Structure probing data (DMS and 2A3) for a 177-nucleotide construct. The reactions ran in a buffer of 150 mM KOAc, 10 mM MgCl2 and 150 mM bicine (pH 8.5), at 24 C. 2A3 adducts were read by reverse transcription with SuperScript II with manganese. Values cover nucleotides 27 to 126.
[RMDB]
RNA sequence: GGGAACGACUCGAGUAGAGUCGAAAAGGAGCUCCAGUAGGAUUAAUAGGGGUUAUUGAAAUACCUACAAUAGAAGGAACAAAUGAAUUAAUGAAAUCUAAAGAUACUUCAAUAAUUCUUGCAACUAGAGUGCAUUAAAUUUCGAUUUAAUGCACUCAAAAGAAACAACAACAACAAC
Reactivity to DMS in 0.01 (KOAc 150mM, MgCl2 10mM, bicine 150mM(pH8.5), 24C), signal-to-noise 2, nucleotides 027 to 126: g010g000a120g010c050u000c020c070a110g010u000a040g010g010a200u000u000a060a040u010a120g000g010g010g000u000u000a050u010u020g020a040a030a070u000a060c030c000u020a030c080a140a150u010a070g020a100a090g000g050a140a090c130a110a050a090u020g000a030a040u000u000a080a120u010g010a070a040a050u000c020u010a070a040a210g000a060u010a040c120u010u020c000a010a120u010a030a020u000u000c000u010u000g010c080a040a120c090u010a110
Reactivity to 2A3 in 0.01 (KOAc 150mM, MgCl2 10mM, bicine 150mM(pH8.5), 24C), signal-to-noise 1, nucleotides 027 to 126: g030g020a010g010c030u020c070c020a010g020u050a010g010g080a110u090u130a100a090u140a220g100g000g020g030u020u030a100u090u060g010a090a000a000u070a060c010c010u000a010c050a040a050u080a110g060a100a010g000g000a090a020c010a050a130a000u130g010a010a060u100u070a040a080u040g000a060a090a000u030c030u110a220a100a000g020a020u070a060c010u050u070c020a020a000u040a030a000u030u020c000u040u130g040c020a010a000c000u030a050